[RMDB]
RNA sequence: GGGAACGACUCGAGUAGAGUCGAAAAACGAAAGUUGCCAUGAGACCGUAACUUUCGUAGUCAUUGAUAAAGGGGCAGGUCUCGCUCUUUUGUCAUUGCGGUUGCCUAGAGGCAUGGUCGUUUACCGAAAAGAGCUCAUUCUUCGGAAUGAGCUCAAGAUUACGCUCAGGUUCGCCUGAGCGUAAUCAAAAGAAACAACAACAACAAC
Reactivity to 2A3 in 0.01 (KOAc 150mM, MgCl2 10mM, bicine 150mM(pH8.5), 24C), signal-to-noise 2, nucleotides 027 to 156: a000c000g010a000a000a000g000u000u000g030c030c020a170u200g080a080g020a150c040c020g010u010a000a000c000u000u000u000c000g000u000a010g030u010c010a020u000u040g000a000u010a010a030a000g000g000g000g000c010a010g100g140u080c050u090c100g000c000u020c020u000u010u000u010g000u000c000a000u010u050g030c050g080g000u080u040g010c000c020u130a120g020a190g100g000c020a040u080g010g000u000c030g000u000u030u090a250c000c010g010a080a070a010a070g020a000g020c010u010c000a000u000u000c000u030u110c150g090g000a000a000u000g000a000g010c000u000c000a000a000
Reactivity to DMS in 0.01 (KOAc 150mM, MgCl2 10mM, bicine 150mM(pH8.5), 24C), signal-to-noise 1, nucleotides 027 to 156: a030c000g000a030a020a040g000u000u010g030c000c000a200u010g000a090g000a070c090c050g000u000a060a000c010u000u000u000c010g020u000a070g070u000c090a150u000u000g000a090u000a000a040a010g010g010g010g000c020a100g000g030u010c120u010c070g040c030u000c000u040u000u000u010g040u010c010a060u000u000g020c090g010g030u000u000g000c030c030u000a220g040a240g010g000c110a070u000g020g000u010c070g040u000u000u000a130c010c020g000a050a030a120a140g000a010g000c000u000c000a020u000u000c010u010u000c300g040g010a040a020u000g040a000g060c010u000c000a000a020

Structure probing data (2A3 and DMS) for a 207-nucleotide construct. The DMS profile rests on 2,911 reads. 2A3 adducts were read by reverse transcription with SuperScript II with manganese. For DMS the reverse transcriptase was MarathonRT. It was measured as part of the RMDB library M2RFPK. The reactions ran in a buffer of 150 mM KOAc, 10 mM MgCl2 and 150 mM bicine (pH 8.5), at 24 C.